[RMDB]
RNA sequence: GGGAACGACUCGAGUAGAGUCGAAAAGCCCCUAGAUGAAUAGUCUAAGGCGUUUGGGAAUAAUGGAUGUGAGGGAACUCGGCCAAAUAGUCCCGUAUCUUAGGUAGAAGGGAUGCCUAUCCAGAAAAUAUAAGUAGAGGUUCGCCUCUACUUAUAUAAAAGAAACAACAACAACAAC
Reactivity to 2A3 in 0.01 (KOAc 150mM, MgCl2 10mM, bicine 150mM(pH8.5), 24C), signal-to-noise 9, nucleotides 027 to 126: g020c000c000c000c000u030a050g020a130u060g060a150a160u120a170g020u000c010u020a010a060g040g020c070g070u090u160u170g030g000g000a050a040u070a080a090u060g030g020a070u130g110u150g200a030g010g030g020a070a070c010u010c030g050g000c010c000a020a060a020u120a040g040u010c010c010c000g000u030a040u030c030u040u050a040g040g010u030a040g080a160a040g030g010g030a020u100g010c000c010u030a070u030c030c010a020g100a050a130a060
Reactivity to DMS in 0.01 (KOAc 150mM, MgCl2 10mM, bicine 150mM(pH8.5), 24C), signal-to-noise 9, nucleotides 027 to 126: g010c050c000c020c090u010a080g000a060u010g000a150a120u040a100g010u010c000u000a020a040g010g020c170g020u010u020u020g010g000g010a060a030u010a110a180u010g000g000a030u020g020u040g010a040g000g010g070a110a130c030u000c020g010g000c020c030a020a050a120u020a100g000u000c000c000c000g010u010a030u010c030u000u010a030g000g010u010a070g020a130a090g000g000g010a060u010g010c040c020u000a080u010c040c050a120g010a080a080a090
An RNA of 177 nucleotides, treated with 2A3 and DMS and read out base by base. Conditions: 150 mM KOAc, 10 mM MgCl2 and 150 mM bicine (pH 8.5), 24 C. Values cover nucleotides 27 to 126. 2A3 adducts were read by reverse transcription with SuperScript II with manganese. It was measured as part of the RMDB libraries RFM100 and RFMREP.